The data come from the RNA Mapping Database (RMDB), library OK3TST. Chemical mapping of a 207-nucleotide RNA with 2A3. The RNA was probed in 150 mM KOAc, 10 mM MgCl2 and 150 mM bicine (pH 8.5) at 24 C. For 2A3 the reverse transcriptase was SuperScript II with manganese. For 2A3, 542 sequencing reads were counted.
[RMDB]
RNA sequence: GGGAACGACUCGAGUAGAGUCGAAAACUGGUGUUGAAUAAACAAAUCGUUUGUCAAUUGCCCUGAAAGCCUUAUCCUUGUCAAGAAGGUAGGCAACCAUGUCAGCAUCUGUUAGACCGUAGUAUUCCUUAAGCGCCUUCUUAGCGUCAGCAUCAGCCACCACCGAUUUGUUCGCAAAUCGGUGGUGAAAAGAAACAACAACAACAAC
Reactivity to 2A3 in 0.01 (KOAc 150mM, MgCl2 10mM, bicine 150mM(pH8.5), 24C), signal-to-noise 2, nucleotides 027 to 156: c040u050g000g000u040g000u000u080g010a060a050u210a260a020a010c040a080a190a060u170c070g010u090u100u020g000u000c070a140a100u090u070g040c010c000c050u020g120a130a020a000g000c020c010u060u120a130u220c000c070u170u040g170u220c090a130a000g080a000a010g210g000u050a060g020g010c010a010a030c070c050a050u090g000u060c030a010g040c010a040u070c050u040g100u090u110a040g030a050c040c090g010u020a020g040u070a120u010u090c010c000u050u050a030a030g140c010g070c040c000u040u060c060u090u130a040g020c000g080u010c020a000g070c000a010u020c000a010g040c000